Structure probing data (2A3 and DMS) for a 207-nucleotide construct. DMS adducts were read by reverse transcription with MarathonRT. For 2A3, 3,821 sequencing reads were counted. The RNA was probed in 150 mM KOAc, 10 mM MgCl2 and 150 mM bicine (pH 8.5) at 24 C. 2A3 adducts were read by reverse transcription with SuperScript II with manganese. For DMS, 5,593 sequencing reads were counted.
RNA sequence: GGGAACGACUCGAGUAGAGUCGAAAACAACCUGGGAGUUACGUCCGGAUAUUGCUCCAGGCGCAAUAGAACGGUAGACAUCAACUGAUGCGAGAGCAUCUCAACUUAUGGACCUUAGUGUAUCGCAAGACGACCGGUCCCGUCGGAAUUGCGUAGAGAGUCCUAAUUAGUUCGCUAAUUAGGACUCAAAAGAAACAACAACAACAAC
Reactivity to 2A3 in 0.01 (KOAc 150mM, MgCl2 10mM, bicine 150mM(pH8.5), 24C), signal-to-noise 5, nucleotides 027 to 156: c040a000a060c000c020u030g010g060g020a050g010u070u090a040c020g050u000c020c020g020g010a050u050a060u090u110g030c040u040c050c030a050g120g000c030g010c010a000a070u060a060g110a130a030c020g060g000u050a040g050a110c030a080u080c050a090a090c060u070g000a010u000g010c010g030a040g000a010g050c000a040u030c020u010c020a030a130c050u140u120a060u200g030g010a020c020c010u050u120a050g050u060g050u160a070u120c010g010c010a020a000g050a030c010g040a030c010c010g030g030u020c000c010c010g010u000c000g000g020a140a080u020u010g000c000g010u040a020g020a000
Reactivity to DMS in 0.01 (KOAc 150mM, MgCl2 10mM, bicine 150mM(pH8.5), 24C), signal-to-noise 3, nucleotides 027 to 156: c090a090a210c030c010u000g030g040g020a180g010u000u010a060c040g010u010c030c020g000g050a170u000a060u010u030g000c050u010c040c020a060g020g000c050g000c040a020a030u010a120g020a140a090c030g020g070u000a090g010a060c050a120u000c050a050a090c040u010g000a050u000g000c000g000a300g010a260g020c000a040u010c010u000c040a080a100c100u000u000a080u000g000g010a040c020c030u010u000a110g010u010g000u010a120u000c030g030c050a050a170g020a160c030g000a040c000c000g010g010u000c010c010c030g000u020c010g020g000a130a180u010u010g020c040g020u000a100g010a300